[RMDB]
RNA sequence: GGGAACGACUCGAGUAGAGUCGAAAAGAGGAGCUAUUCGCGGCCGUAAAGGUGUGCGUGGAUAUCAAGGAUAUCUCGAAUCCAAGGUAAGUAAGCACGGGAGUGAAAAAGCUCAUAGGGCUGCGAGCAGGCCUCUUAUGUUCGCAUAAGAGGCCUGAAAAGAAACAACAACAACAAC
Reactivity to DMS in 0.01 (KOAc 150mM, MgCl2 10mM, bicine 150mM(pH8.5), 24C), signal-to-noise 3, nucleotides 027 to 126: g020a080g030g030a090g010c120u010a130u020u000c010g030c020g040g020c000c020g030u000a050a180a220g010g020u020g030u000g010c020g000u010g040g020a130u000a000u000c000a040a300g000g000a040u000a040u000c040u000c190g010a070a040u000c000c010a020a300g000g000u010a020a050g000u010a050a200g000c020a000c030g000g010g010a090g010u000g010a080a090a050a120a140g010c020u010c000a090u000a110g010g010g020c000u000g010c030g000a020g020
Reactivity to 2A3 in 0.01 (KOAc 150mM, MgCl2 10mM, bicine 150mM(pH8.5), 24C), signal-to-noise 1, nucleotides 027 to 126: g090a060g070g050a040g060c040u080a120u100u080c010g010c000g000g000c000c000g110u090a070a020a050g250g040u230g040u000g140c020g040u110g030g050a050u030a020u010c020a040a020g020g010a000u040a070u140c080u040c050g040a060a010u000c010c000a000a000g030g000u030a030a060g010u010a070a000g000c000a010c000g050g010g000a020g000u080g100a260a090a040a070a000g020c010u010c020a040u070a020g100g010g010c010u030g010c030g000a000g000